[RMDB]
RNA sequence: GGGAACGACUCGAGUAGAGUCGAAAAGAUAUGGACCGUUUGCAACAGCGUGUGGUUCGGAAACGAACCCACGACAUGCUGCGGUCCUAAGUCAAAAGUUCCACCAGUCUUCGGACUGGUGGAACAACAGUAAGCAAUGGUUCGCCAUUGCUUACUGAAAAGAAACAACAACAACAAC
Reactivity to DMS in 0.01 (KOAc 150mM, MgCl2 10mM, bicine 150mM(pH8.5), 24C), signal-to-noise 4, nucleotides 027 to 126: g010a020u000a120u010g000g000a000c000c000g010u000u010u000g030c000a050a240c300a130g010c010g020u000g010u020g040g010u000u000c000g020g000a020a030a070c010g030a000a010c000c000c000a000c010g020a070c140a090u000g010c010u010g000c010g000g000u000c000c000u000a000a060g000u010c010a140a080a140a120g010u000u000c000c000a010c000c000a000g000u000c000u000u010c200g020g000a010c010u000g000g030u000g000g000a000a000c000a030a100
Reactivity to 2A3 in 0.01 (KOAc 150mM, MgCl2 10mM, bicine 150mM(pH8.5), 24C), signal-to-noise 5, nucleotides 027 to 126: g000a010u010a010u050g000g010a000c010c010g020u160u300u250g030c090a160a150c160a300g120c020g000u040g160u300g050g000u000u000c020g000g010a020a020a000c000g010a000a000c000c000c000a000c000g030a040c010a050u020g000c000u010g020c000g010g000u000c000c000u000a000a010g000u000c010a050a030a050a120g000u000u010c000c000a000c010c000a000g010u000c000u070u300c300g130g000a000c000u000g000g000u010g000g000a000a000c000a010a000
Overview
Structure probing data (DMS and 2A3) for a 177-nucleotide construct. The reactions ran in a buffer of 150 mM KOAc, 10 mM MgCl2 and 150 mM bicine (pH 8.5), at 24 C. For 2A3, 13,717 sequencing reads were counted.